Conditions: 150 mM KOAc, 10 mM MgCl2 and 150 mM bicine (pH 8.5), 24 C. The record gives the reactivity of an RNA of 207 nucleotides to DMS and 2A3. 2A3 adducts were read by reverse transcription with SuperScript II with manganese. Reactivities are given for positions 27 through 156.

[RMDB]
RNA sequence: GGGAACGACUCGAGUAGAGUCGAAAAACUGCUGACUCUUCAGCAUUUAAAGCAGUGCACAGGUUCUUGAUGAAUGAAUGAGCCACAUACACAUGUUCUACUUGAAUGCCUGGUAGGCAGUGAGCACUAUGGGAUCCAUCAUAAUCUAAAAAUAUUAAUCCCUUUUAGCAUUCGUGCUAAAAGGGAUAAAAGAAACAACAACAACAAC
Reactivity to DMS in 0.01 (KOAc 150mM, MgCl2 10mM, bicine 150mM(pH8.5), 24C), signal-to-noise 1, nucleotides 027 to 156: a100c020u010g030c000u000g010a090c070u000c090u000u000c040a070g060c010a040u010u000u000a070a120a120g020c020a070g030u000g010c040a150c070a120g030g000u020u000c080u000u000g030a170u020g010a110a130u020g000a080a080u010g010a080g020c020c040a080c060a180u010a070c050a040c080a130u000g020u000u000c050u010a010c020u000u020g020a060a080u000g010c040c030u010g000g000u000a100g000g020c010a050g000u000g010a090g070c020a060c140u000a040u010g010g020g010a050u000c040c020a060u000c040a090u000a070a100u000c030u020a010a080a060a090a120u000a070u000u000a180
Reactivity to 2A3 in 0.01 (KOAc 150mM, MgCl2 10mM, bicine 150mM(pH8.5), 24C), signal-to-noise 4, nucleotides 027 to 156: a000c040u030g010c000u010g030a070c030u030c020u230u070c040a000g020c010a030u030u070u120a120a130a000g040c030a010g010u030g020c020a010c030a050g070g030u070u060c050u100u120g060a130u100g030a120a030u120g010a070a040u050g010a030g050c000c000a110c050a100u180a020c030a000c020a080u060g000u120u130c010u030a050c000u040u090g060a180a040u060g070c020c030u000g010g010u010a030g030g020c000a010g000u020g030a020g010c050a020c080u040a070u070g010g010g060a020u020c030c010a020u060c030a040u090a210a030u080c020u180a030a100a100a050a110u290a060u300u300a050